[RMDB]
RNA sequence: GGGAACGACUCGAGUAGAGUCGAAAAGGGUGAUCCACCCGGAGAUGAGCGGAGAAACCACAUCCAGAGGACCCCUUCGACGAACAGAAGACCCUGGACCGGGAGGGAAUAGCCCAUAGUACAAGGGGAAUAUAACAAUGUUCGCAUUGUUAUAUUCAAAAGAAACAACAACAACAAC
Reactivity to DMS in 0.01 (KOAc 150mM, MgCl2 10mM, bicine 150mM(pH8.5), 24C), signal-to-noise 6, nucleotides 027 to 126: g010g000g010u010g010a220u010c010c000a090c010c010c020g020g000a200g000a080u000g010a140g010c070g000g010a250g010a140a120a130c040c020a050c060a260u010c010c010a030g000a180g020g010a090c060c110c300c020u010u000c020g000a100c090g000a080a060c090a090g000a050a050g000a100c010c010c000u000g000g010a090c030c010g020g000g010a100g000g000g010a040a050u000a300g000c010c000c000a060u010a070g010u010a060c090a080a090g010g010g000
Reactivity to 2A3 in 0.01 (KOAc 150mM, MgCl2 10mM, bicine 150mM(pH8.5), 24C), signal-to-noise 6, nucleotides 027 to 126: g010g010g000u050g010a040u000c000c000a010c010c010c010g030g000a110g020a110u160g020a040g090c080g030g100a100g140a170a100a050c020c010a020c000a040u000c010c010a010g100a250g050g010a080c060c030c010c040u020u010c000g060a080c030g090a240a060c040a080g020a030a010g040a070c000c000c000u000g010g000a000c010c010g010g020g010a070g050g020g000a030a010u080a120g000c020c000c000a010u070a010g080u060a030c040a060a030g040g040g020